[RMDB]
RNA sequence: GGGAACGACUCGAGUAGAGUCGAAAAAAUGGGUCACCAGAGGUGUCCUGCGUGUACCACAGCGAAGACGGAGAGAAUCAGUUUCUGAGAGACCCCAAGCGGUCAGUCAUGGGUGACGGCUUCCAGCUAGACGUACAUGGUUCGCCAUGUACGUCUAAAAAGAAACAACAACAACAAC
Reactivity to DMS in 0.01 (KOAc 150mM, MgCl2 10mM, bicine 150mM(pH8.5), 24C), signal-to-noise 2, nucleotides 027 to 126: a080a100u010g000g000g000u000c020a040c010c030a140g010a060g020g020u010g000u010c040c030u010g010c160g020u000g000u000a080c020c040a110c110a120g000c090g010a080a090g010a040c060g000g010a070g020a110g010a130a080u010c060a060g000u000u000u000c010u010g030a150g020a160g030a060c010c020c010c110a040a080g000c100g010g000u010c030a060g010u010c050a070u010g010g000g010u010g000a060c090g010g000c050u000u000c020c030a060g020c160
Reactivity to 2A3 in 0.01 (KOAc 150mM, MgCl2 10mM, bicine 150mM(pH8.5), 24C), signal-to-noise 1, nucleotides 027 to 126: a040a040u140g020g010g000u020c000a040c050c050a050g020a060g100g070u060g030u040c030c020u010g040c050g100u040g000u080a060c040c000a060c090a130g030c070g020a050a000g080a000c080g020g020a090g000a010g030a070a070u160c040a040g020u160u000u000c020u020g030a100g010a010g040a060c020c010c010c010a070a000g060c060g070g000u030c020a030g030u070c050a130u250g100g040g040u050g020a030c030g000g020c000u070u060c010c010a000g050c020